The record gives the reactivity of an RNA of 177 nucleotides to 2A3 and DMS. For DMS, 8,509 sequencing reads were counted.

RNA sequence: GGGAACGACUCGAGUAGAGUCGAAAAGCGGAAAAGAGUGCGUGGUAGCACAAACCAUACCAAUCCGCGGCACAGGGUCGCACAUGCACAGCUUCGCCUGUGCAAAGCGAACAAGGCGAACAAAGAACACUAGUGAUCGGUUCGCCGAUCACUAGUGAAAAGAAACAACAACAACAAC
Reactivity to 2A3 in 0.01 (KOAc 150mM, MgCl2 10mM, bicine 150mM(pH8.5), 24C), signal-to-noise 5, nucleotides 027 to 126: g000c000g010g050a040a040a050a040g180a050g030u050g040c090g030u030g040g080u090a040g060c080a000c060a130a070a010c030c020a040u080a110c030c020a000a050u010c000c020g000c010g000g000c030a050c020a130g130g060g050u010c010g000c010a020c020a110u060g010c010a020c010a020g000c020u200u210c130g060c020c000u000g000u000g000c000a000a000a010g000c010g020a030a020c030a060a050g060g030c030g040a060a000c060a130a160a020g140a150a030
Reactivity to DMS in 0.01 (KOAc 150mM, MgCl2 10mM, bicine 150mM(pH8.5), 24C), signal-to-noise 5, nucleotides 027 to 126: g010c020g000g000a050a100a080a090g010a210g020u020g020c120g050u000g020g020u020a080g000c150a080c180a050a120a040c100c060a070u030a100c020c030a090a200u000c010c010g000c020g000g020c080a070c120a090g000g000g000u010c000g000c000a060c160a290u000g010c000a010c010a030g000c020u030u050c220g010c170c000u010g000u010g000c000a010a020a120g010c010g000a050a070c070a110a110g010g000c040g000a040a080c080a050a040a110g000a050a080